Conditions: 150 mM KOAc, 10 mM MgCl2 and 150 mM bicine (pH 8.5), 24 C.
Structure probing data (2A3 and DMS) for a 177-nucleotide construct.
For DMS the reverse transcriptase was MarathonRT.
Reactivities are given for positions 27 through 126.
It was measured as part of the RMDB library RFMREP.
For 2A3, 3,003 sequencing reads were counted.
RNA sequence: GGGAACGACUCGAGUAGAGUCGAAAACCGCUUUCUUCGGAAAGCGGAAAAAGAGCUGGUCAAUGUGAUUACUCCUAUUUGGAAUAUCAGAAUACUAGUGAAGAAAAGGCUCAGCUUCGGCUGAGCCGUACAAUUAGACGUUCGCGUCUAAUUGUACAAAAGAAACAACAACAACAAC
Reactivity to 2A3 in 0.01 (KOAc 150mM, MgCl2 10mM, bicine 150mM(pH8.5), 24C), signal-to-noise 4, nucleotides 027 to 126: c000c000g000c000u010u010u000c010u030u030c110g100g020a000a000a000g010c010g000g040a050a000a000a040a000g090a010g020c020u010g000g000u010c020a020a010u020g000u000g000a020u030u060a040c030u040c000c000u140a300u300u160u210g020g010a020a020u010a000u050c000a000g080a100a080u220a300c020u010a010g050u030g060a080a100g080a080a180a020a040g000g020c000u000c010a010g010c020u030u040c190g080g000c000u000g010a000g030c020c000
Reactivity to DMS in 0.01 (KOAc 150mM, MgCl2 10mM, bicine 150mM(pH8.5), 24C), signal-to-noise 2, nucleotides 027 to 126: c010c000g020c000u010u000u000c010u000u010c240g020g000a010a010a000g020c010g010g010a010a010a090a100a070g010a300g000c010u000g010g000u000c010a160a010u000g000u000g010a010u000u010a060c090u000c000c010u010a150u010u020u000g000g010a020a030u000a010u000c000a010g000a180a020u010a010c010u000a010g030u000g020a080a140g000a090a070a110a210g000g000c010u000c010a000g010c000u000u010c190g020g000c020u000g010a010g010c000c010